RNA sequence: GGGAACGACUCGAGUAGAGUCGAAAACUGACACCAUGUAUGAUGUAAUUCCUAUUUAUCAAUGCAACAGCACAGGAAUAGGUUACGCCGUCUCGGAGUGGUACGGAAUCUGCAAAGAUCAAUGUUCAGACUCUUGCUAGUUCGCUAGCAAGAGUCUAAAAGAAACAACAACAACAAC
Reactivity to 2A3 in 0.01 (KOAc 150mM, MgCl2 10mM, bicine 150mM(pH8.5), 24C), signal-to-noise 1, nucleotides 027 to 126: c040u010g010a000c020a010c070c040a040u050g100u110a070u110g110a030u070g050u080a040a070u170u030c070c000u040a090u020u080u040a230u100c090a070a130u080g000c040a140a180c110a290g000c010a030c010a050g070g000a040a010u040a080g050g000u010u010a030c080g000c020c000g080u020c010u040c130g030g040a050g020u080g020g010u090a020c020g030g000a050a040u000c000u020g070c000a050a000a080g060a030u040c060a090a040u110g020u140u080c040
Reactivity to DMS in 0.01 (KOAc 150mM, MgCl2 10mM, bicine 150mM(pH8.5), 24C), signal-to-noise 2, nucleotides 027 to 126: c040u000g000a110c050a100c000c020a030u000g070u000a070u020g000a040u010g000u000a020a090u000u010c020c040u000a000u000u000u000a050u020c000a110a290u000g030c030a100a130c300a160g000c010a010c110a170g000g000a020a030u000a000g000g010u000u000a040c080g000c080c050g010u020c050u010c060g030g000a090g020u000g030g000u000a060c140g040g000a020a030u000c030u000g010c130a030a040a030g010a000u000c050a070a090u000g020u000u000c110